Chemical mapping of a 207-nucleotide RNA with DMS. It was measured as part of the RMDB library M2RFPK. Reactivities are given for positions 27 through 156. DMS adducts were read by reverse transcription with MarathonRT. The DMS profile rests on 1,952 reads.
RNA sequence: GGGAACGACUCGAGUAGAGUCGAAAAUGGGCCGUGGGCUUAACCAGGACAAGAUCUCCUUCUCUCCAACGUUGUUGCCAACUCAUGAUUCUCCUAACCUGUGCUUGGAGAGACGUGGACCCAGAGUAAAACGAAGGGUGCUUCGGCACCCUUCGAAUCUACAGGACAAGUUCGCUUGUCCUGUAGAAAAAGAAACAACAACAACAAC
Reactivity to DMS in 0.01 (KOAc 150mM, MgCl2 10mM, bicine 150mM(pH8.5), 24C), signal-to-noise 1, nucleotides 027 to 156: u020g000g000g040c000c000g030u010g060g030g000c080u020u020a040a090c020c050a060g000g020a120c050a060a110g010a170u000c060u010c030c030u030u000c000u000c020u000c010c020a030a080c090g000u010u020g060u010u000g000c040c030a030a090c070u010c050a130u000g010a140u000u010c060u000c000c070u010a100a050c030c060u010g030u000g000c110u000u010g020g000a050g000a080g030a000c060g040u000g020g010a090c050c020c000a200g000a150g010u010a060a070a140a190c040g020a050a010g000g010g060u000g040c000u000u010c300g040g000c000a030c000c000c010u030u000c010g000a030a110
The reactions ran in a buffer of 150 mM KOAc, 10 mM MgCl2 and 150 mM bicine (pH 8.5), at 24 C.